Chemical mapping of a 207-nucleotide RNA with 2A3 and DMS.
Source: RMDB library OK3TST, as collected in RNAgym.
2A3 adducts were read by reverse transcription with SuperScript II with manganese.
The reactions ran in a buffer of 150 mM KOAc, 10 mM MgCl2 and 150 mM bicine (pH 8.5), at 24 C.
RNA sequence: GGGAACGACUCGAGUAGAGUCGAAAAACAAAAAGUGCUAUUUCGGCGCGGAACUGCGAAGCGCUUUUAAAUUAAACCAGUCACCACGGAUGCUUGCGGAUCGAACGUGAUUCCGCUACACAAUAGACGUUCAUCGACUUUUGCCUUAUAAGCACUGCUUAGCUCCUACUUUCGAGUAGGAGCUAAGAAAAGAAACAACAACAACAAC
Reactivity to 2A3 in 0.01 (KOAc 150mM, MgCl2 10mM, bicine 150mM(pH8.5), 24C), signal-to-noise 4, nucleotides 027 to 156: a000c080a010a050a010a020a000g020u010g000c010u060a220u120u140u120c040g020g000c010g010c030g040g020a050a050c050u080g020c040g060a070a040g030c010g000c000u080u050u040u060a060a090a060u050u110a050a030a050c050c020a020g070u060c040a010c120c030a020c120g050g030a040u010g030c040u040u080g020c030g020g010a010u030c030g020a100a110c070g070u120g060a050u160u060c000c000g000c020u040a020c080a000c000a050a070u060a100g080a030c020g010u000u020c060a090u060c040g090a140c080u040u110u130u150g010c010c010u160u100a130u070a170a030g020c060a010c030u140g010
Reactivity to DMS in 0.01 (KOAc 150mM, MgCl2 10mM, bicine 150mM(pH8.5), 24C), signal-to-noise 1, nucleotides 027 to 156: a070c050a100a050a100a050a080g000u020g000c070u000a200u000u000u000c060g030g020c010g050c120g000g000a120a020c070u000g010c000g000a110a150g020c010g000c020u000u000u000u000a020a040a210u010u000a050a110a140c030c030a110g040u010c020a080c060c010a070c070g020g020a100u000g010c010u000u000g010c010g000g010a090u000c020g030a050a090c120g030u000g020a110u000u000c010c000g030c000u000a050c060a090c080a130a140u010a130g020a060c050g010u000u000c030a140u000c010g010a090c040u010u010u000u010g030c000c030u000u000a150u000a090a040g020c030a040c040u000g000